[RMDB]
Structure probing data (2A3 and DMS) for a 177-nucleotide construct. For DMS, 1,836 sequencing reads were counted. High DMS reactivity at an A or C suggests that its Watson-Crick edge is free.

RNA sequence: GGGAACGACUCGAGUAGAGUCGAAAACGAUAGCUGUUCGCAGCUAUCGAAAGGACUACCCGUCAGGGUUAAGGCCAUACGGAGAGCCGGGUCCAAUGCCGAAAAGAGGGUUGUUCGCAACCCUCAAUCUUAUGCGUAGCUUCGGCUACGCAUAAGAAAAAGAAACAACAACAACAAC
Reactivity to 2A3 in 0.01 (KOAc 150mM, MgCl2 10mM, bicine 150mM(pH8.5), 24C), signal-to-noise 2, nucleotides 027 to 126: c010g000a000u010a010g000c000u010g070u060u070c250g030c090a010g000c000u000a020u000c000g000a020a010a000g000g000a010c010u040a020c010c020c050g080u180c160a160g050g000g020u050u170a160a100g040g000c020c000a070u100a130c060g090g030a080g010a030g120c030c000g030g040g010u000c030c000a000a020u080g020c000c020g090a130a050a040a060g010a010g000g020g000u000u000g030u010u060c220g000c040a030a040c040c030c000u000c000a000a000
Reactivity to DMS in 0.01 (KOAc 150mM, MgCl2 10mM, bicine 150mM(pH8.5), 24C), signal-to-noise 2, nucleotides 027 to 126: c020g010a010u000a000g030c000u000g010u000u010c230g020c010a000g010c000u000a010u000c000g030a020a080a110g020g010a020c000u000a060c020c010c000g010u010c300a090g000g000g000u000u000a070a050g000g000c000c040a090u030a110c080g000g010a300g000a140g000c010c000g020g010g020u000c010c010a060a050u000g010c000c020g000a150a050a110a140g000a010g020g020g000u000u000g000u000u000c150g010c040a000a020c000c010c000u000c010a000a040